An RNA of 177 nucleotides, treated with 2A3 and DMS and read out base by base.
For DMS the reverse transcriptase was MarathonRT.
The reactions ran in a buffer of 150 mM KOAc, 10 mM MgCl2 and 150 mM bicine (pH 8.5), at 24 C.
The 2A3 profile rests on 4,662 reads.
RNA sequence: GGGAACGACUCGAGUAGAGUCGAAAAGAUAUGGAGAUUCUUCUUCAACAGCCAUAGGUCGGAAACGACCUGAUGGACAUGAAGUCGUGAUCUCCUAAGUCAAAACACAGUUGUUCGCAACUGUGAACCACUGACUAACGUUCGCGUUAGUCAGUGGAAAAGAAACAACAACAACAAC
Reactivity to 2A3 in 0.01 (KOAc 150mM, MgCl2 10mM, bicine 150mM(pH8.5), 24C), signal-to-noise 2, nucleotides 027 to 126: g010a010u030a020u060g010g000a020g000a010u020u000c010u030u010c000u020u010c050a250a060c080a260g020c010c010a010u020a000g020g030u000c000g000g000a030a010a000c010g000a000c000c000u000g060a040u010g030g000a000c050a300u300g000a000a020g010u020c030g120u180g040a010u020c000u000c010c000u000a010a000g000u000c000a050a000a170a060c010a000c000a010g000u000u030g050u160u150c300g070c160a010a010c000u000g010u010g000a020a020
Reactivity to DMS in 0.01 (KOAc 150mM, MgCl2 10mM, bicine 150mM(pH8.5), 24C), signal-to-noise 2, nucleotides 027 to 126: g000a020u020a130u010g010g000a020g000a020u000u000c000u000u000c010u000u000c000a160a100c270a180g000c000c000a010u000a020g000g030u020c000g020g010a020a040a050c010g000a000c000c000u000g000a000u000g010g000a030c060a290u000g000a020a000g000u000c010g010u010g020a000u000c000u000c000c000u000a020a030g000u000c010a090a090a130a280c010a000c020a020g010u000u000g000u030u000c200g030c010a010a020c000u000g000u000g000a110a240